The record gives the reactivity of an RNA of 177 nucleotides to DMS and 2A3. The RNA was probed in 150 mM KOAc, 10 mM MgCl2 and 150 mM bicine (pH 8.5) at 24 C.
[RMDB]
RNA sequence: GGGAACGACUCGAGUAGAGUCGAAAACUUAAAGCCGACCGACUUGCCUGUCAUAUGGGCCGGGAGCUUGAGAAAACCGAUGUUCGAGAUGAUCUUUUCAGGCUGUCCUAUUUCGGUUUGAUCUACGGACCAUACUCCCGUUCGCGGGAGUAUGGUCAAAAGAAACAACAACAACAAC
Reactivity to DMS in 0.01 (KOAc 150mM, MgCl2 10mM, bicine 150mM(pH8.5), 24C), signal-to-noise 1, nucleotides 027 to 126: c010u000u000a150a000a070g000c040c040g030a100c000c000g020a130c180u000u000g000c020c020u000g010u000c160a260u080a060u010g000g000g000c000c190g000g020g000a120g020c030u000u000g020a080g000a100a040a030a150c020c000g030a180u040g070u040u010c100g000a170g010a170u000g000a130u020c040u000u010u000u000c070a000g020g000c000u000g000u040c010c080u020a170u000u000u050c050g000g000u080u000u000g080a130u000c000u040a030c230g000
Reactivity to 2A3 in 0.01 (KOAc 150mM, MgCl2 10mM, bicine 150mM(pH8.5), 24C), signal-to-noise 2, nucleotides 027 to 126: c000u050u110a180a000a000g090c010c000g040a090c020c000g010a080c160u130u160g110c000c020u080g000u120c020a110u220a080u300g000g000g010c000c000g010g000g000a060g060c030u090u080g000a000g000a050a050a000a000c040c020g000a040u080g050u140u060c130g010a030g070a300u060g010a020u060c000u040u150u150u110c200a020g000g100c000u020g030u150c010c020u040a070u130u050u070c070g020g000u050u040u080g040a030u000c030u010a020c030g050
The data come from the RNA Mapping Database (RMDB), library OK1LIB.